[RMDB]
RNA sequence: GGGAACGACUCGAGUAGAGUCGAAAAUGAAAGUAGUCUCCUGCAGCGUCUGGGGUUUCCGUUGCAGUCCUCGGAACCAGGACCUCGGCGUGGCCUAGCGAGAUAUGGCGACGAAGGCCGUGAAAAACACUAUGAGAUGAUUCGUCAUCUCAUAGUGAAAAGAAACAACAACAACAAC
Reactivity to DMS in 0.01 (KOAc 150mM, MgCl2 10mM, bicine 150mM(pH8.5), 24C), signal-to-noise 9, nucleotides 027 to 126: u010g000a090a090a100g010u010a080g010u000c020u000c010c010u000g010c050a200g010c050g010u000c020u020g030g000g000g010u000u010u000c050c060g010u000u000g000c090a120g000u000c040c040u000c100g010g000a070a080c130c080a170g000g000a040c030c010u000c020g010g000c020g010u000g000g010c030c100u000a070g010c070g010a050g010a070u000a060u000g000g000c020g020a080c080g010a130a110g010g010c010c020g010u000g000a050a060a090a080a150
Reactivity to 2A3 in 0.01 (KOAc 150mM, MgCl2 10mM, bicine 150mM(pH8.5), 24C), signal-to-noise 7, nucleotides 027 to 126: u170g030a060a050a020g100u160a030g030u010c010u020c020c010u020g030c030a030g020c000g050u020c030u210g040g000g020g000u020u100u000c020c000g040u050u070g030c080a050g090u100c000c020u030c020g050g020a050a060c030c010a060g040g060a010c000c000u000c000g010g020c010g020u030g020g000c000c050u040a030g010c020g090a030g010a060u090a080u160g060g000c020g020a120c080g040a130a030g080g010c010c030g030u120g040a130a060a000a000a010